[RMDB]
RNA sequence: GGGAACGACUCGAGUAGAGUCGAAAAAUAAAACUGCCUCGAGGCAGCGCACAGACUGGUUGGAUCGCUCGACGAUCAUGGCAGCAUCAGCGACCAAAGCAAUCCGUUUGCUAUUGAACUCCCAGCCUAUCGUAACCCAGUUCGCUGGGUUACGAUAAAAAGAAACAACAACAACAAC
Reactivity to 2A3 in 0.01 (KOAc 150mM, MgCl2 10mM, bicine 150mM(pH8.5), 24C), signal-to-noise 3, nucleotides 027 to 126: a000u150a000a050a010a020c030u050g010c020c010u100c150g050a150g020g000c000a010g000c010g020c030a050c000a030g050a060c020u050g000g100u070u070g050g010a050u030c030g040c080u090c100g180a220c010g010a100u040c000a030u050g060g000c020a040g010c000a060u020c010a020g000c000g030a050c050c000a110a100a010g040c020a010a020u000c080c090g070u060u030u010g000c020u090a110u140u070g060a020a040c030u020c000c000c000a000g010c020c010
Reactivity to DMS in 0.01 (KOAc 150mM, MgCl2 10mM, bicine 150mM(pH8.5), 24C), signal-to-noise 3, nucleotides 027 to 126: a120u070a090a030a090a080c060u000g030c000c020u050c180g020a140g040g050c020a040g000c070g020c090a120c160a060g000a100c060u000g040g000u000u000g000g020a040u000c070g000c010u060c190g030a150c000g000a080u000c060a110u000g000g000c150a070g010c030a070u000c020a140g000c010g020a080c080c070a020a100a040g010c040a020a030u000c110c140g030u000u000u000g000c090u020a070u020u000g000a070a080c200u000c000c000c000a090g000c130c120
The record gives the reactivity of an RNA of 177 nucleotides to 2A3 and DMS. Values cover nucleotides 27 to 126. For 2A3 the reverse transcriptase was SuperScript II with manganese. The DMS profile rests on 2,797 reads. Conditions: 150 mM KOAc, 10 mM MgCl2 and 150 mM bicine (pH 8.5), 24 C.